[RMDB]
RNA sequence: GGGAACGACUCGAGUAGAGUCGAAAACGCUGGGCAUGAAAUUCGGUACAUGGAGCUUACUGAAGCGCGCACGGUAAGCGAUGAAAUGUACCCGAACACAUGCCUGUGCUGAAGCGCGCACGGCAACCGAAAGGUGCGAGGGUCUCAUUCGUGAGACACUGUAUGAUGUCUUCGGACAUCAUACAGUAAAAGAAACAACAACAACAAC
Reactivity to 2A3 in 0.01 (KOAc 150mM, MgCl2 10mM, bicine 150mM(pH8.5), 24C), signal-to-noise 4, nucleotides 027 to 156: c010g000c010u020g000g000g010c000a000u000g030a020a070a170u070u000c010g000g000u000a000c000a010u010g000g010a000g000c000u000u010a000c000u020g050a210a120g000c010g000c000g000c000a000c010g020g000u010a000a000g010c010g200a300u010g000a000a000a010u010g000u010a010c030c010c020g010a020a010c050a000c000a040u000g000c000c000u000g000u010g000c010u030g020a150a040g000c000g000c010g000c020a010c010g000g000c010a010a000c010c000g050a090a030a040g010g000u030g000c010g020a140g130g040g020u000c000u000c000a020u130u150c220g110u060g030a000g000a000c010
Reactivity to DMS in 0.01 (KOAc 150mM, MgCl2 10mM, bicine 150mM(pH8.5), 24C), signal-to-noise 2, nucleotides 027 to 156: c040g060c060u010g000g010g000c000a040u030g000a070a080a220u000u000c000g030g030u000a000c010a050u000g010g010a060g040c010u000u000a000c030u010g010a020a030g030c050g030c030g000c000a300c000g020g000u000a000a020g030c000g000a150u000g010a120a120a040u000g000u000a010c020c030c020g030a060a020c080a300c050a030u020g000c000c010u010g020u000g000c000u020g000a040a020g000c040g050c010g010c010a300c020g020g030c020a140a110c020c020g000a100a150a240g020g010u000g050c000g010a110g010g010g010u000c000u000c000a070u000u000c300g010u000g010a030g000a030c040